[RMDB]
The data come from the RNA Mapping Database (RMDB), library M2RFPK. An RNA of 207 nucleotides, treated with 2A3 and DMS and read out base by base. For DMS, 2,783 sequencing reads were counted. The RNA was probed in 150 mM KOAc, 10 mM MgCl2 and 150 mM bicine (pH 8.5) at 24 C. Values cover nucleotides 27 to 156.

RNA sequence: GGGAACGACUCGAGUAGAGUCGAAAAAACCCGUUGAGUGAAAUUGAACCGUCCUGUUAUCGAAAGAUAGGCAGAAGAUACGAAAUGUGUGACAGCAUGGGAAGUAAAGGCAGACCGUGGUUCCCUUAAAAUCGUCGAAUCUUCGGAUUCGACGAAACUAUUGCAAUGACUUCGGUCAUUGCAAUAGAAAAGAAACAACAACAACAAC
Reactivity to 2A3 in 0.01 (KOAc 150mM, MgCl2 10mM, bicine 150mM(pH8.5), 24C), signal-to-noise 1, nucleotides 027 to 156: a000a000c000c000c010g000u030u070g070a140g030u100g070a050a210a200u080u110g020a030a040c030c000g040u050c000c000u050g010u000u020a010u040c010g010a010a050a080g010a110u050a040g060g000c010a000g010a050a010g060a060u120a040c070g030a090a150a040u060g040u010g040u070g070a070c020a020g030c000a040u050g020g000g010a010a030g000u080a120a080a030g070g030c000a010g000a040c000c000g000u010g050g030u050u030c000c000c000u020u070a100a080a020a090u020c000g000u000c000g000a000a000u030c000u060u110c160g070g000a020u010u000c000g000a010c000g000a000a000a000
Reactivity to DMS in 0.01 (KOAc 150mM, MgCl2 10mM, bicine 150mM(pH8.5), 24C), signal-to-noise 1, nucleotides 027 to 156: a150a080c030c000c050g030u000u020g000a140g030u010g000a020a070a100u010u000g020a110a100c000c020g020u000c020c010u010g030u010u010a070u000c040g020a190a150a130g020a050u000a020g030g000c010a040g010a090a100g000a100u000a080c040g000a060a100a090u010g010u000g020u030g030a120c010a090g000c020a070u000g010g020g030a120a070g020u010a060a050a050g000g040c060a060g010a080c050c010g000u000g000g010u020u000c010c010c000u000u000a010a070a050a090u010c010g030u000c010g020a040a020u000c000u000u000c300g050g010a040u000u000c010g000a010c000g000a010a010a070